The record gives the reactivity of an RNA of 207 nucleotides to 2A3. The 2A3 profile rests on 1,032 reads. The data come from the RNA Mapping Database (RMDB), library VIROID.

RNA sequence: GGGAACGACUCGAGUAGAGUCGAAAAUGGAGCGCGCGGCUGUGAGUAAUCGCUCCUCUGGAGAAGAAAACCAGCGUUGCUUCCUGCCUGAGCCUCGUCUUCUGUCCCGCUAGUCGAGCGGACAACCCGAGCACCGCCGAAGGCCUUUUUUCUUUUAUCUACUGUAAUAGUUCGCUAUUACAGUAGAAAAAGAAACAACAACAACAAC
Reactivity to 2A3 in 0.01 (KOAc 150mM, MgCl2 10mM, bicine 150mM(pH8.5), 24C), signal-to-noise 2, nucleotides 027 to 156: u070g000g000a000g020c070g010c020g000c020g040g090c190u170g010u020g060a030g040u040a150a090u130c190g010c000u000c030c000u040c150u160g050g010a060g020a190a040g040a000a130a000a030c000c020a000g010c000g040u050u250g000c000u140u030c000c000u010g010c010c000u040g060a020g000c010c000u020c020g040u010c000u070u040c020u010g040u060c050c040c020g000c010u030a060g170u150c050g070a030g000c040g010g010a050c020a070a090c010c060c010g020a010g040c010a040c010c060g030c060c040g060a030a010g040g000c030c010u120u120u000u020u000u030c000u070u020u030u040a300